[RMDB]
RNA sequence: GGGAACGACUCGAGUAGAGUCGAAAAAGAAGAUUCGUCUUCUCUCUGCGUACUACAAGGCGAUGAAAUAUGCUACCUCGAUAAGAGCUCCCAAAUAGGAGCUCUUUUGACGAGGGUCAUAUGGAGCCUUGUAUCGCCAACCCGAGCUUCGGCUCGGAAAGAUACACACAUUCGUGUGUGUAUCUUUAAAAGAAACAACAACAACAAC
Reactivity to 2A3 in 0.01 (KOAc 150mM, MgCl2 10mM, bicine 150mM(pH8.5), 24C), signal-to-noise 3, nucleotides 027 to 156: a000g020a010a000g010a030u040u150c190g050u030c110u030u000c030u010c000u000c050u080g000c020g040u100a130c020u000a000c050a000a000g030g020c000g160a260u060g010a040a030a000u010a000u010g020c040u150a300c000c000u010c000g000a000u020a020a000g010a010g000c000u020c000c030c040a100a080a040u290a040g000g000a000g020c020u040c210u020u010u000u100g170a060c000g010a000g020g000g000u000c000a000u020a000u010g010g010a010g010c000c000u020u000g000u000a000u030c000g030c000c010a040a040c000c010c000g010a000g000c010u090u150c280g110g010c000u000c000g000g000